[RMDB]
An RNA of 177 nucleotides, treated with 2A3 and DMS and read out base by base. The reactions ran in a buffer of 150 mM KOAc, 10 mM MgCl2 and 150 mM bicine (pH 8.5), at 24 C. Values are in units of 0.01, from 0 to 300, in steps of 10. It was measured as part of the RMDB library OK2TST. DMS adducts were read by reverse transcription with MarathonRT. High DMS reactivity at an A or C suggests that its Watson-Crick edge is free.

RNA sequence: GGGAACGACUCGAGUAGAGUCGAAAAUUGCGCGUUCAGCCCUUGCACUCGUUGCGGUAACGCUUGUCACAGGCGCGGCCCAUGCCGAUGAAGUCAAUCUUUAUACAACGCGCGAACCGGGUCUGAAUGACUACGAGUCAUUCGUGACUCGUAGUCAAAAAGAAACAACAACAACAAC
Reactivity to 2A3 in 0.01 (KOAc 150mM, MgCl2 10mM, bicine 150mM(pH8.5), 24C), signal-to-noise 1, nucleotides 027 to 126: u030u050g070c060g030c000g030u040u040c050a040g000c030c000c090u040u070g030c050a030c040u040c010g030u030u150g020c060g030g070u070a040a010c020g000c000u020u060g200u140c090a110c030a120g050g000c010g000c010g050g000c080c040c020a050u170g050c000c020g000a010u080g070a010a040g000u050c050a030a150u060c000u030u080u030a150u000a040c030a040a000c010g000c000g000c040g020a010a020c020c000g070g000g000u000c010u000g020a070a040
Reactivity to DMS in 0.01 (KOAc 150mM, MgCl2 10mM, bicine 150mM(pH8.5), 24C), signal-to-noise 3, nucleotides 027 to 126: u020u010g000c030g010c050g020u000u000c050a140g070c030c020c030u010u020g030c140a070c090u010c050g030u000u000g040c090g000g000u010a030a070c040g010c030u010u000g010u040c160a130c130a070g010g010c010g000c090g010g030c000c060c110a160u010g010c010c000g020a080u010g000a060a060g000u000c190a070a100u010c040u010u010u000a100u000a090c080a090a060c050g010c020g000c010g000a030a100c060c060g020g030g000u000c010u000g010a070a110